[RMDB]
RNA sequence: GGGAACGACUCGAGUAGAGUCGAAAAACAUUGAAAUAAUUGAUCACCAAUUUUGUAACAUACUGCAGAUUUUAGUCUAUACAUAAUUCCAUUAAUUACAAUUUCUUGUGAAACAUCCAUAGGUGAGUCAUUAAUAACAGAUCUAAAACCAGUAUAACAUUAAUCCACGAUUCGUCGUGGAUUAAUGAAAAGAAACAACAACAACAAC
Reactivity to DMS in 0.01 (KOAc 150mM, MgCl2 10mM, bicine 150mM(pH8.5), 24C), signal-to-noise 1, nucleotides 027 to 156: a080c040a080u000u000g020a180a100a040u010a070a050u010u010g020a140u010c020a080c020c010a100a120u010u000u000u000g020u000a040a220c050a050u000a030c030u000g010c100a030g010a270u010u010u000u010a040g030u000c030u010a200u010a120c040a060u000a030a060u010u000c040c020a100u000u000a050a050u000u000a080c040a060a100u000u010u000c110u000u000g030u000g010a090a050a070c080a040u000c060c020a140u000a060g040g020u000g040a070g030u000c010a030u010u000a040a090u010a060a110c060a040g010a080u010c030u010a020a040a000a020c000c010a060g050u000a050u000a050a240
Reactivity to 2A3 in 0.01 (KOAc 150mM, MgCl2 10mM, bicine 150mM(pH8.5), 24C), signal-to-noise 3, nucleotides 027 to 156: a000c040a040u140u170g070a030a050a050u210a070a080u130u100g050a060u120c070a030c100c060a040a070u100u130u100u160g050u110a070a060c010a050u010a010c010u010g010c070a100g030a190u030u050u010u030a000g020u000c010u040a080u080a150c020a100u250a110a130u200u010c030c000a010u050u070a040a010u040u040a080c020a070a060u060u050u180c030u050u080g030u010g070a100a120a090c010a100u140c080c030a020u050a030g020g000u010g020a030g020u000c020a020u000u070a050a020u040a080a010c020a000g040a020u060c010u040a000a000a000a030c020c000a000g000u010a050u000a070a010